Structure probing data (DMS and 2A3) for a 170-nucleotide construct. For 2A3 the reverse transcriptase was SuperScript II with manganese. Conditions: 150 mM KOAc, 10 mM MgCl2 and 150 mM bicine (pH 8.5), 24 C.

[RMDB]
RNA sequence: GGGAACGACUCGAGUAGAGUCGAAAAGCGGCCUGGCAAUUUUAACCAAGACUUCUAUGAUUUCGUGGUAUCUAAAGGUUUCUUUAAGGAGGGCUCUUCAGUGACGCUCAAACAUUUUUUCUUUGCUGUACGCGAGGGUUCGCCCUCGCGAAAAGAAACAACAACAACAAC
Reactivity to DMS in 0.01 (KOAc 150mM, MgCl2 10mM, bicine 150mM(pH8.5), 24C), signal-to-noise 1, nucleotides 027 to 129: g030c020g000g010c050c000u010g000g010c090a050a080u000u000u000u000a060a100c040c020a090a090g040a220c050u000u000c060u050a140u000g090a100u050u000u000c030g050u030g140g000u040a120u050c050u070a040a040a080g000g000u010u010u010c020u000u000u040a030a160g040g030a040g030g000g020c000u000c010u010u140c090a190g100u000g020a100c130g000c100u000c040a100a120a170c170a140u000u000u000u000u200u000c020u000u000u000g050c170u000g080u030a060
Reactivity to 2A3 in 0.01 (KOAc 150mM, MgCl2 10mM, bicine 150mM(pH8.5), 24C), signal-to-noise 2, nucleotides 027 to 129: g030c010g000g030c010c010u020g000g000c060a000a000u030u200u090u110a070a020c000c010a000a000g070a050c020u010u000c020u090a000u080g010a010u160u060u000c020g000u030g080g020u040a150u110c050u120a060a020a020g080g000u060u030u020c040u020u010u000a060a000g070g010a010g020g000g000c010u000c020u120u020c040a140g000u000g060a060c010g050c010u130c000a050a110a000c010a200u020u020u010u000u200u210c000u010u080u070g090c030u070g050u040a060